[RMDB]
RNA sequence: GGGAACGACUCGAGUAGAGUCGAAAACUGUCCUGGAUGAAAGAACAGCCGAAAUUAGGCCUCUACGGCUGUAGAGGCAUCCAGAUCGUGUAGCGAUGUGAUGGCACUACUCGCGUAGUGUUUGUGUGACGCGAGUCACACCAUCACGACAGACACGCGAUGCUAGAUAGUUCGCUAUCUAGCAUCGAAAAGAAACAACAACAACAAC
Reactivity to 2A3 in 0.01 (KOAc 150mM, MgCl2 10mM, bicine 150mM(pH8.5), 24C), signal-to-noise 4, nucleotides 027 to 156: c000u010g000u010c010c000u000g000g000a000u000g050a050a080a160g120a090a030c030a020g010c000c030g060a050a100a050u190u120a130g050g070c030c040u050c030u060a060c030g080g000c000u030g010u030a080g040a030g050g040c000a000u000c000c000a000g000a020u000c010g010u080g120u160a050g140c010g010a010u010g000u000g000a010u000g010g000c030a000c030u020a010c020u030c100g040c080g030u010a010g020u020g070u040u080u110g100u000g020u050g020a000c000g010c050g030a000g010u000c000a000c000a000c010c000a000u010c000a000c010g010a000c010a000g010a020c060a020c040g030
Reactivity to DMS in 0.01 (KOAc 150mM, MgCl2 10mM, bicine 150mM(pH8.5), 24C), signal-to-noise 1, nucleotides 027 to 156: c000u000g000u000c010c000u010g030g010a150u000g010a090a100a140g040a190a020c000a010g030c040c010g000a120a120a200u000u000a050g010g030c070c030u020c000u000a200c010g020g000c030u020g000u000a040g000a280g000g000c000a020u000c020c020a110g000a060u000c010g030u000g000u010a050g010c040g060a050u000g000u000g040a080u010g000g000c020a090c010u000a050c000u000c270g020c200g020u000a040g020u000g020u000u010u010g050u000g000u000g000a010c000g050c200g010a230g010u010c100a010c090a030c010c040a000u000c010a000c000g040a080c010a110g040a070c000a030c050g040
Chemical mapping of a 207-nucleotide RNA with 2A3 and DMS. In probing experiments dimethyl sulfate is read out at A N1 and C N3, which are open when not base-paired. It was measured as part of the RMDB library OK3TST.